[RMDB]
RNA sequence: GGGAACGACUCGAGUAGAGUCGAAAAGUACUACCGUUCGCGGUAGUACAAAUAAUCGAGCCUGGAAAGGCUGGAGCCAAAACUAUGGUAAAGGCACCAUAGAAAGAGCAGAGUUCGCUCUGCUCAAGUGAAACAUCCUGUUCGCAGGAUGUUUCACAAAAGAAACAACAACAACAAC
Reactivity to 2A3 in 0.01 (KOAc 150mM, MgCl2 10mM, bicine 150mM(pH8.5), 24C), signal-to-noise 1, nucleotides 027 to 126: g020u000a000c000u010a000c000c000g000u010u070c260g000c010g120g020u000a000g000u000a000c000a020a040a000u050a000a000u010c000g030a010g000c030c000u080g140g100a140a070a000g000g000c000u020g070g020a030g050c000c000a040a090a070a090c030u050a000u000g020g010u080a080a130a160g120g010c070a010c020c000a010u000a000g060a050a120a030g010a000g000c020a010g000a010g040u090u100c140g080c060u010c020u030g000c000u000c000a010a020
Reactivity to DMS in 0.01 (KOAc 150mM, MgCl2 10mM, bicine 150mM(pH8.5), 24C), signal-to-noise 1, nucleotides 027 to 126: g010u000a020c000u000a000c010c000g060u000u030c230g010c010g010g000u000a000g000u000a000c010a000a070a110u000a070a170u010c050g000a010g010c010c000u000g000g020a160a120a010g010g000c000u020g000g000a030g000c010c060a000a040a110a240c010u000a010u010g010g010u000a030a130a130g010g010c210a090c000c000a030u000a000g000a100a060a070g020a000g010c030a010g000a040g010u000u010c270g010c010u000c000u000g000c000u000c000a000a060
An RNA of 177 nucleotides, treated with 2A3 and DMS and read out base by base.
The DMS profile rests on 800 reads.
For DMS the reverse transcriptase was MarathonRT.
2A3 adducts were read by reverse transcription with SuperScript II with manganese.
The 2A3 profile rests on 1,276 reads.